[RMDB]
RNA sequence: GGGAACGACUCGAGUAGAGUCGAAAAGAAGAGCAGGCAGAUAAUCUUGUGCAGUAUGCAUGCUCCUAUCUCCACAAGAAGUAAGGCAGCAAAAGAAUAACUGCCACUGCACAAGUGGAGCCGCAGACACUCGAGUCGCGUUCGCGCGACUCGAGUGAAAAGAAACAACAACAACAAC
Reactivity to 2A3 in 0.01 (KOAc 150mM, MgCl2 10mM, bicine 150mM(pH8.5), 24C), signal-to-noise 1, nucleotides 027 to 126: g050a080a000g000a000g030c010a090g020g000c000a040g080a250u260a120a110u160c000u000u000g010u000g020c000a000g000u000a220u140g120c000a000u000g000c000u000c000c000u000a000u100c020u000c010c030a140c000a050a080g190a030a000g000u170a030a020g050g070c080a000g000c020a000a000a040a160g140a120a170u000a020a020c000u060g000c000c000a000c000u000g000c000a000c000a000a000g020u020g000g080a070g050c010c000g000c030a000g080a000